[RMDB]
RNA sequence: GGGAACGACUCGAGUAGAGUCGAAAAUGGACUUUUUACAGUUCCUACUUAUCCGGUUUUAACGCUGUUUUAUUGGCGCAAAGGUUUACGGAUAAACAACUAAUAAUUAAACCUUUUGUGUGCGAAACGACAACUAUGUUUUCGAACAUAGUUGUCGAAAAGAAACAACAACAACAAC
Reactivity to 2A3 in 0.01 (KOAc 150mM, MgCl2 10mM, bicine 150mM(pH8.5), 24C), signal-to-noise 5, nucleotides 027 to 126: u170g030g030a050c060u050u080u070u110u160a080c140a050g010u060u100c010c000u020a040c030u030u000a010u000c000c000g020g010u010u020u000u070a050a020c020g000c020u010g180u100u140u050u100a090u110u270g020g000c020g000c020a020a010a000g010g000u000u000u000a010c020g020g000a000u010a030a120a020c060a030a010c030u140a030a120u110a190a040u170u160a010a010a010c000c000u000u050u120u120g090u020g020u030g070c050g040a080a090a040
Reactivity to DMS in 0.01 (KOAc 150mM, MgCl2 10mM, bicine 150mM(pH8.5), 24C), signal-to-noise 2, nucleotides 027 to 126: u020g000g010a100c080u000u000u040u010u040a050c120a030g010u000u000c010c000u000a060c180u060u010a010u000c020c000g000g000u000u000u000u000a180a170c090g000c070u000g010u010u050u090u050a110u040u040g000g010c000g000c020a020a040a000g000g000u010u000u000a050c030g010g000a030u030a010a030a110c140a070a090c120u050a060a020u010a090a070u000u020a020a000a000c000c000u000u000u010u000g020u010g010u020g020c050g000a040a110a130